[RMDB]
RNA sequence: GGGAACGACUCGAGUAGAGUCGAAAACGCCCGUCGGAAGGACUCAGCGUGGUGAUGGCGGGCAGUCGCCGCCCUUGCCGGGGCGGUCAUGCCGCUUAGCCUUCGGCGUCCGGGAGUUACCGCUCUCCCGUUGAUGCGUUUUCGAACGCAUCAACGGAAAAGAAACAACAACAACAAC
Reactivity to 2A3 in 0.01 (KOAc 150mM, MgCl2 10mM, bicine 150mM(pH8.5), 24C), signal-to-noise 2, nucleotides 027 to 126: c120g030c000c060c020g020u030c020g080g100a070a030g080g040a080c000u020c090a040g010c070g060u040g000g040u070g030a140u070g060g060c040g010g060g050c020a000g030u060c070g000c000c000g010c000c010c020u030u280g190c050c060g020g000g010g020c000g000g000u000c000a020u060g060c000c000g000c010u030u050a030g030c020c000u100u080c060g060g000c010g050u060c000c110g000g020g000a040g000u120u090a060c020c030g030c020u000c000u010c010
Reactivity to DMS in 0.01 (KOAc 150mM, MgCl2 10mM, bicine 150mM(pH8.5), 24C), signal-to-noise 2, nucleotides 027 to 126: c180g060c010c070c000g000u010c050g020g000a100a010g040g010a120c040u040c050a100g020c060g080u000g000g000u000g000a110u040g000g000c000g030g020g070c020a030g030u000c300g000c000c000g000c000c000c120u000u000g020c300c300g000g000g000g050c000g000g000u020c070a000u000g000c010c000g000c010u000u000a300g030c020c000u050u000c160g030g000c080g010u000c030c020g050g000g010a000g000u010u010a120c090c090g000c020u000c050u000c050